[RMDB]
RNA sequence: GGGAACGACUCGAGUAGAGUCGAAAAGAACGUGGGCGAGGUUUUUAUUUUCAAACUUGGUGUACUAUAGUGCAAUGCGUUGUUAAUUGUAAUACGAUGUUUCUUCGAUAAAAGGAGCGGAGGGAGACAAGAUAUUGGUGUUCGCACCAAUAUCUUGAAAAGAAACAACAACAACAAC
Reactivity to 2A3 in 0.01 (KOAc 150mM, MgCl2 10mM, bicine 150mM(pH8.5), 24C), signal-to-noise 1, nucleotides 027 to 126: g050a070a020c010g020u060g000g060g020c060g020a060g000g000u040u220u000u000u000a060u030u140u050u160c070a060a100a060c050u070u040g080g030u020g020u000a050c050u040a030u090a110g010u000g070c030a020a030u030g070c090g030u010u010g050u070u120a060a060u160u060g000u040a040a090u060a110c030g030a010u000g040u010u010u020c040u010u050c030g010a010u060a080a120a010a010g060g000a020g000c020g000g050a060g050g080g030a040g000a000
Reactivity to DMS in 0.01 (KOAc 150mM, MgCl2 10mM, bicine 150mM(pH8.5), 24C), signal-to-noise 1, nucleotides 027 to 126: g000a100a050c070g010u000g010g030g000c060g020a080g020g000u000u010u000u000u020a060u040u000u010u030c100a050a030a100c040u020u000g020g010u010g000u000a050c130u010a100u010a070g030u010g010c020a060a060u000g000c160g020u000u010g020u000u010a090a080u000u000g020u000a050a060u000a130c110g000a170u030g010u000u000u000c010u000u000c090g010a150u020a020a050a050a100g010g000a080g000c060g000g000a140g010g000g000a120g030a160